Structure probing data (2A3 and DMS) for a 207-nucleotide construct. Conditions: 150 mM KOAc, 10 mM MgCl2 and 150 mM bicine (pH 8.5), 24 C.

RNA sequence: GGGAACGACUCGAGUAGAGUCGAAAAGGGGAUGAUCGGUUUCGACGAUGUUAGUCGCGACAGGUGAAGCGGGCCGAGGAUGCAGAAUUAUCUCGUAAACGCUGUCUGCAAAACAAUAAGUGCCAAACAAACGCGCACUGACUUCGCUCUCGCUGCCGCCAGAAGUUAUCUUCGGAUAACUUCUGGCAAAAGAAACAACAACAACAAC
Reactivity to 2A3 in 0.01 (KOAc 150mM, MgCl2 10mM, bicine 150mM(pH8.5), 24C), signal-to-noise 3, nucleotides 027 to 156: g010g010g010g010a060u050g000a040u100c090g030g040u040u070u070c020g020a060c020g050a090u110g040u110u090a030g000u010c010g000c010g030a030c020a030g010g000u030g090a080a010g000c020g000g000g000c000c040g010a010g010g030a010u030g010c040a020g100a090a060u140u070a150u110c040u020c060g070u080a020a090a080c030g030c040u020g020u030c000u020g000c000a010a070a040a050c090a040a060u100a190a020g020u000g050c020c040a030a180a150c110a060a090a010c160g020c010g010c050a010c030u010g010a010c010u020u020c050g020c040u000c000u000c060g040c060u050g050c040c030
Reactivity to DMS in 0.01 (KOAc 150mM, MgCl2 10mM, bicine 150mM(pH8.5), 24C), signal-to-noise 1, nucleotides 027 to 156: g010g000g070g010a070u040g000a040u000c080g030g000u000u020u020c020g020a120c010g020a090u000g020u030u040a130g020u010c030g020c070g000a090c040a050g050g030u010g000a070a080g020c000g000g020g000c220c030g010a060g000g020a220u000g000c040a130g010a110a140u000u000a100u000c070u000c110g000u000a080a070a130c060g010c060u000g010u000c000u000g030c040a040a050a070a070c060a100a160u000a040a040g030u000g040c000c000a040a080a180c070a050a060a150c100g010c060g050c030a050c020u000g010a000c080u000u000c030g030c060u000c020u000c000g000c020u010g000c000c020